[RMDB]
RNA sequence: GGGAACGACUCGAGUAGAGUCGAAAAAACACAGAAAGGACAGAGGGUUAGAAGUCUAACCUCCUGGCAAGCUACGCCUGCUACAAUGCUGACUUCACCUCGUCAGACUCUGAUGUCACCUCUCCAGAUGCUGCCGUCCUCACCUACAAGAUAAGGACACCACCUCAUGAUUCGUCAUGAGGUGGUGAAAAGAAACAACAACAACAAC
Reactivity to 2A3 in 0.01 (KOAc 150mM, MgCl2 10mM, bicine 150mM(pH8.5), 24C), signal-to-noise 2, nucleotides 027 to 156: a000a000c060a010c010a010g010a020a040a010g010g020a020c070a140g040a080g050g010g020u090u080a030g020a040a010g020u010c020u030a050a090c010c010u060c000c050u060g000g000c000a040a090g050c030u170a040c200g000c030c020u030g000c000u080a020c040a070a290u220g050c020u020g020a020c000u000u010c000a040c010c010u010c000g020u010c020a000g020a050c010u020c040u040g130a240u010g080u080c010a090c050c000u050c000u030c000c040a040g030a100u080g000c020u060g030c020c000g060u040c000c000u070c060a080c010c000u140a110c040a190a000g040a100u110a060a040g010g000a000